[RMDB]
RNA sequence: GGGAACGACUCGAGUAGAGUCGAAAACACUGGGGCCGCACAUUCCUUCCAAUUGUAUCUUACAUCAAAAACACCCAAAGAAUCGACUUGCUGACGGCAGUUGUCACACAUCUGAGAUACCACACUGCGACUGUGCACUGUUCGCAGUGCACAGUCGAAAAGAAACAACAACAACAAC
Reactivity to DMS in 0.01 (KOAc 150mM, MgCl2 10mM, bicine 150mM(pH8.5), 24C), signal-to-noise 1, nucleotides 027 to 126: c130a200c100u000g000g000g020g030c000c000g000c000a070c170a030u120u000c070c000u000u000c000c070a070a000u000u000g000u030a010u000c000u000u020a060c090a000u070c030a060a050a030a000a120c080a030c040c010c030a040a070a130g030a060a060u050c100g000a060c030u000u000g000c100u000g000a210c090g000g010c020a010g000u000u000g020u040c010a040c040a070c110a040u000c000u000g000a030g000a000u020a030c040c060a100c070a060c010u000g000
Reactivity to 2A3 in 0.01 (KOAc 150mM, MgCl2 10mM, bicine 150mM(pH8.5), 24C), signal-to-noise 4, nucleotides 027 to 126: c090a010c020u030g010g000g080g000c040c000g120c020a010c020a050u090u040c010c000u060u090c010c000a070a160u080u070g030u020a110u030c050u060u070a080c080a120u110c070a030a030a070a060a030c040a090c050c000c040a040a160a000g070a040a090u070c020g010a020c060u050u040g020c010u040g060a040c020g040g000c000a020g040u060u050g030u090c020a020c010a000c000a080u070c060u050g050a030g000a070u060a100c010c020a050c020a010c080u120g030

Record summary
An RNA of 177 nucleotides, treated with DMS and 2A3 and read out base by base. For DMS, 1,058 sequencing reads were counted. For DMS the reverse transcriptase was MarathonRT. The RNA was probed in 150 mM KOAc, 10 mM MgCl2 and 150 mM bicine (pH 8.5) at 24 C.